RNA sequence: GGGAACGACUCGAGUAGAGUCGAAAAAGGGUCAGCGGCGCACACAUUGCCGCGGCCGCGGCCCACACCAGAUAACCCUCGUAUCCCACGCCGGCCGUCGACGUGUUUUGGGCAAUGCCGUGGAACGACUCCCAAGACUGUUCGCAGUCUUGGGAGUAAAAGAAACAACAACAACAAC
Reactivity to DMS in 0.01 (KOAc 150mM, MgCl2 10mM, bicine 150mM(pH8.5), 24C), signal-to-noise 2, nucleotides 027 to 126: a120g010g000g020u020c000a100g070c010g020g000c000g010c080a100c110a120c120a130u000u020g010c040c000g040c040g020g010c010c020g020c030g000g030c000c000c000a040c110a130c100c040a090g000a130u080a100a190c040c010c020u000c050g020u000a080u000c050c030c000a080c170g000c070c080g030g000c080c080g010u000c020g030a050c040g040u010g000u000u060u010u020g000g020g010c040a060a040u000g010c050c070g020u020g000g010a060a050c100g000
Reactivity to 2A3 in 0.01 (KOAc 150mM, MgCl2 10mM, bicine 150mM(pH8.5), 24C), signal-to-noise 1, nucleotides 027 to 126: a000g050g010g010u000c080a090g010c000g000g000c000g020c010a040c000a010c000a180u110u300g080c040c120g000c010g020g080c000c010g000c010g000g000c000c010c000a050c000a000c000c010a010g020a180u150a110a090c050c000c000u020c000g000u030a130u250c000c040c000a010c060g070c000c000g000g040c030c010g130u160c020g040a040c020g070u120g090u140u090u140u100g050g010g000c000a000a000u060g050c050c000g060u050g040g020a040a030c040g030